[RMDB]
RNA sequence: GGGAACGACUCGAGUAGAGUCGAAAAUGCAUAUCGCCGCUUACAGAAGCGUGGAUUUUCACAUACCAAUCGGAAGUGUCUGUGCAAAUCUAUCGCAACUGUACACGGCGAUACUGCAGUUAUUGAAUUCAGGGUGCAAUUUCGAUUGCACCCUGAAAAAAGAAACAACAACAACAAC
Reactivity to 2A3 in 0.01 (KOAc 150mM, MgCl2 10mM, bicine 150mM(pH8.5), 24C), signal-to-noise 2, nucleotides 027 to 126: u050g000c000a000u010a000u020c000g000c000c000g000c010u000u000a000c000a010g000a050a000g000c000g010u000g000g010a000u010u010u010u000c000a000c020a010u030a000c010c040a120a200u300c220g070g090a200a030g090u100g020u140c020u010g000u000g010c000a000a010a000u000c020u010a040u300c020g000c000a020a000c000u000g000u000a000c010a010c040g000g000c000g000a000u000a000c000u000g000c000a000g000u030u050a210u140u140g070a090a070
Reactivity to DMS in 0.01 (KOAc 150mM, MgCl2 10mM, bicine 150mM(pH8.5), 24C), signal-to-noise 1, nucleotides 027 to 126: u000g010c020a060u010a040u030c010g050c000c020g030c130u000u000a010c000a030g000a000a300g000c000g000u000g000g000a000u000u000u010u000c000a000c030a020u000a020c000c010a160a200u080c220g000g050a080a260g010u040g060u000c050u000g000u000g040c060a000a000a010u000c000u010a030u110c020g010c030a080a210c010u000g000u000a000c080a190c000g030g000c010g010a000u000a030c130u030g000c000a030g000u030u000a010u000u000g000a100a170